The data come from the RNA Mapping Database (RMDB), library RNAMAK.
The record gives the reactivity of an RNA of 207 nucleotides to 2A3.
RNA sequence: GGGAACGACUCGAGUAGAGUCGAAAAGGGGUCGGAUGGAGUCGUUCCAGAGCGAUGAGUAUACUGAAGCCUCCACGGUAUACGAGCUCUGGACGACGUUGAAAUCCGACGGAGGCACCCAAAGUAUCGUUAAUUGCUUCGGCAAUUAACGAUACAAUCAACCGGUUAUCUUCGGAUAACCGGUUGAAAAAGAAACAACAACAACAAC
Reactivity to 2A3 in 0.01 (KOAc 150mM, MgCl2 10mM, bicine 150mM(pH8.5), 24C), signal-to-noise 1, nucleotides 027 to 156: g100g010g020g050u010c000g000g000a010u020g030g000a020g020u010c020g080u300u020c010c000a000g000a010g010c020g210a300u070g000a020g010u010a000u000a000c020u030g060a160a020g030c010c000u020c000c000a010c000g000g000u000a000u000a000c000g000a000g000c000u010c010u020g000g000a000c010g000a000c000g020u090u000g020a000a000a000u000c000c000g000a000c010g000g000a000g000g020c000a010c000c000c000a000a210a010g000u000a000u010c000g000u000u000a000a000u010u000g030c040u070u070c250g130g000c000a000a000u000u000a000a000c000g000a000u000a000c000a000a040